This 177-nucleotide RNA was probed chemically with 2A3 and DMS. 2A3 adducts were read by reverse transcription with SuperScript II with manganese. For DMS the reverse transcriptase was MarathonRT. It was measured as part of the RMDB libraries RFM100 and RFMREP.

[RMDB]
RNA sequence: GGGAACGACUCGAGUAGAGUCGAAAAUCCCUAAGUGGUUUAGAAUGAUUAGAAGUACAAUCAACAAUAUGGUUUGUGUAGUUAUGCUGAAAAUCGUUGAGGUUGUAUGGAAUAGGUUAACCGUAAGGCCUCUUUCAAAAUUCGUUUUGAAAGAGGCAAAAGAAACAACAACAACAAC
Reactivity to 2A3 in 0.01 (KOAc 150mM, MgCl2 10mM, bicine 150mM(pH8.5), 24C), signal-to-noise 4, nucleotides 027 to 126: u020c000c000c000u010a100a050g080u070g080g080u010u030u080a090g060a290a130u200g070a160u100u170a040g050a090a020g000u000a000c010a000a020u000c000a000a060c000a060a100u130a050u120g000g060u000u020u000g100u020g010u060a060g040u070u130a110u270g030c030u070g120a020a010a000a000u050c020g000u010u010g000a020g000g020u000u000g010u000a030u030g060g060a020a050u010a090g050g070u070u060a000a050c000c020g010u030a040a080g140
Reactivity to DMS in 0.01 (KOAc 150mM, MgCl2 10mM, bicine 150mM(pH8.5), 24C), signal-to-noise 5, nucleotides 027 to 126: u000c000c000c010u010a120a110g030u010g010g000u000u000u010a090g000a100a100u030g000a080u010u000a070g020a270a210g010u000a000c020a010a010u000c000a060a130c160a130a100u020a030u010g010g010u000u000u010g020u010g000u010a050g010u010u030a100u000g010c020u000g000a050a010a020a010u000c000g000u000u000g000a180g000g000u000u000g020u010a020u000g000g010a140a060u020a060g010g000u020u000a030a040c020c030g010u010a090a110g010